[RMDB]
RNA sequence: GGGAACGACUCGAGUAGAGUCGAAAAUUAAAUAGGGAUGCUUGAUGAGAACUGAUGGUGUGGACACGAAAGUGUUCAGGGGUCAGCACCAUUGGGUAACUGAAUCUCGUCAAGCGGCGAGUGUCGAGCACAAAAAGUUAUUCGUAACUUUUUGUGCAAAAGAAACAACAACAACAAC
Reactivity to DMS in 0.01 (KOAc 150mM, MgCl2 10mM, bicine 150mM(pH8.5), 24C), signal-to-noise 7, nucleotides 027 to 126: u020u010a050a080a110u000a130g010g000g010a140u010g010c010u000u000g010a020u000g000a020g010a050a230c010u000g000a010u010g010g010u000g010u000g000g000a000c000a000c000g000a100a090a190g010u000g000u000u000c010a120g010g000g000g010u010c090a150g000c000a010c000c000a010u000u000g010g010g010u010a060a140c300u010g010a100a130u010c000u010c000g010u000c000a010a010g010c020g000g000c100g000a090g000u000g010u000c070g000a220
Reactivity to 2A3 in 0.01 (KOAc 150mM, MgCl2 10mM, bicine 150mM(pH8.5), 24C), signal-to-noise 5, nucleotides 027 to 126: u120u050a030a030a100u150a080g050g020g070a040u100g000c000u000u010g010a010u010g000a010g010a110a090c020u010g010a010u010g000g020u010g020u050g020g000a000c010a000c020g050a100a040a010g000u020g000u030u010c010a000g030g020g010g010u050c030a000g000c000a010c000c000a000u010u010g010g010g030u060a060a030c040u080g120a090a130u000c000u010c000g000u000c000a000a010g000c000g000g000c020g010a030g010u080g060u110c050g040a010